[RMDB]
RNA sequence: GGGAACGACUCGAGUAGAGUCGAAAAGAAAGAAAGGACAGGGGGGUUCCUGCCGGCCGGCAGGGCCUGUCCGAUCAGGUCGCGUACGUGCGUGACCAGUGGUUGUCGCUCGGGGGUGAUCGCCGAACGAUAGAAGCGGUUUCGACCGCUUCUAUCGAAAAGAAACAACAACAACAAC
Reactivity to 2A3 in 0.01 (KOAc 150mM, MgCl2 10mM, bicine 150mM(pH8.5), 24C), signal-to-noise 2, nucleotides 027 to 126: g110a030a090a000g020a050a000a000g000g000a000c000a000g040g000g100g040g030g030u120u180c000c000u000g000c000c000g180g140c150c230g000g000c000a000g000g000g000c020c000u010g000u000c000c000g030a040u040c020a010g050g000u000c000g020c000g000u110a170c070g110u300g070c020g000u010g040a000c010c030a020g030u010g100g010u010u010g080u030c010g000c060u020c050g020g030g000g040g010u070g150a070u090c030g060c080c030g000a070a030
Reactivity to DMS in 0.01 (KOAc 150mM, MgCl2 10mM, bicine 150mM(pH8.5), 24C), signal-to-noise 2, nucleotides 027 to 126: g000a190a140a080g000a010a060a300g010g000a020c000a010g010g030g000g020g080g000u070u120c000c010u010g000c000c000g020g030c300c250g020g010c030a000g000g010g010c000c000u000g000u000c010c020g000a100u000c030a060g030g000u010c000g000c000g000u000a140c300g000u040g020c010g020u000g010a010c000c000a080g010u000g000g030u000u010g010u000c010g000c070u000c010g000g000g000g010g010u010g000a090u040c080g030c040c080g020a040a140